[RMDB]
RNA sequence: GGGAACGACUCGAGUAGAGUCGAAAAGGACUGCGCAGUCCGGGAACAUCAGCAGAGAGCCCGCUAUACGUGACGGAUUGGCUGAAGCGUACAGAAAUAUUGAGCCUCCUGCAAGAGGCAGCCAAGCAAAACGUACGUGAGUUCGCUCACGUACGAACAAAUUUAGUGACUUCGGUCACUAAAUUUGAAAAGAAACAACAACAACAAC
Reactivity to DMS in 0.01 (KOAc 150mM, MgCl2 10mM, bicine 150mM(pH8.5), 24C), signal-to-noise 2, nucleotides 027 to 156: g030g000a020c020u000g020c060g010c040a080g020u000c040c010g000g000g000a060a080c060a100u010c110a130g020c060a100g010a070g030a080g000c000c000c010g010c040u000a040u010a030c040g030u000g000a240c040g000g000a230u010u000g020g040c000u000g010a050a300g010c030g010u010a090c000a070g000a110a040a110u000a120u000u000g020a110g000c010c000u000c020c020u000g030c080a130a120g000a090g020g020c010a070g030c080c020a020a150g000c040a050a050a060a200c000g020u000a000c000g000u010g000a030g020u000u030c300g010c000u000c000a010c010g010u030a000c010g010a010a130
Reactivity to 2A3 in 0.01 (KOAc 150mM, MgCl2 10mM, bicine 150mM(pH8.5), 24C), signal-to-noise 3, nucleotides 027 to 156: g020g010a020c030u060g030c130g000c080a030g030u000c000c000g000g020g000a060a030c040a070u080c030a010g050c050a000g070a010g010a040g080c010c030c020g000c010u050a060u030a100c050g030u040g080a030c040g090g010a110u030u030g050g000c000u020g030a050a010g020c000g020u050a040c030a010g130a100a140a020u270a110u140u160g020a030g000c000c020u030c020c030u090g030c040a070a050g010a010g020g030c010a000g020c020c010a020a030g010c040a020a050a000a080c010g000u010a000c000g000u010g000a010g000u040u090c150g000c070u000c010a000c000g000u000a000c000g000a010a000
Chemical mapping of a 207-nucleotide RNA with DMS and 2A3. Values cover nucleotides 27 to 156. The data come from the RNA Mapping Database (RMDB), library M2RFPK. The RNA was probed in 150 mM KOAc, 10 mM MgCl2 and 150 mM bicine (pH 8.5) at 24 C.